[RMDB]
RNA sequence: GGGAACGACUCGAGUAGAGUCGAAAAAUACCUGAGCUAAGAAGGAUAAUUGUCUUUUGGUAACUAGGUCUACAGGUUUACAUUUUUCUGUGUUACACUCAAGGAUAAAGGCAAAAUCAAUUUUGUACUGUUGGUAUUAUUUCGAUAAUACCAACAGAAAAGAAACAACAACAACAAC
Reactivity to 2A3 in 0.01 (KOAc 150mM, MgCl2 10mM, bicine 150mM(pH8.5), 24C), signal-to-noise 6, nucleotides 027 to 126: a000u120a030c000c000u050g040a030g060c040u120a150a050g030a060a040g170g020a060u050a120a220u180u090g030u040c000u020u070u040u050g070g010u010a030a040c020u020a050g040g030u010c030u080a060c030a040g020g070u050u100u120a050c040a100u110u080u030u070u030c030u040g090u010g010u040u020a020c080a030c040u080c080a060a040g060g000a070u120a100a040a000g010g000c000a010a010a040a050u070c050a040a100u100u070u060u120g050u060a080
Reactivity to DMS in 0.01 (KOAc 150mM, MgCl2 10mM, bicine 150mM(pH8.5), 24C), signal-to-noise 7, nucleotides 027 to 126: a090u000a070c010c010u010g010a110g020c100u010a080a140g010a120a060g010g010a050u000a090a130u010u010g010u000c010u000u000u000u000g010g000u000a040a060c070u000a080g010g000u010c060u000a090c100a040g000g010u000u010u010a060c130a090u000u010u000u010u010c040u000g020u000g010u000u010a050c090a100c090u000c150a060a100g000g000a080u000a020a040a050g010g020c030a020a010a080a080u000c100a070a080u010u000u000u010g010u000a170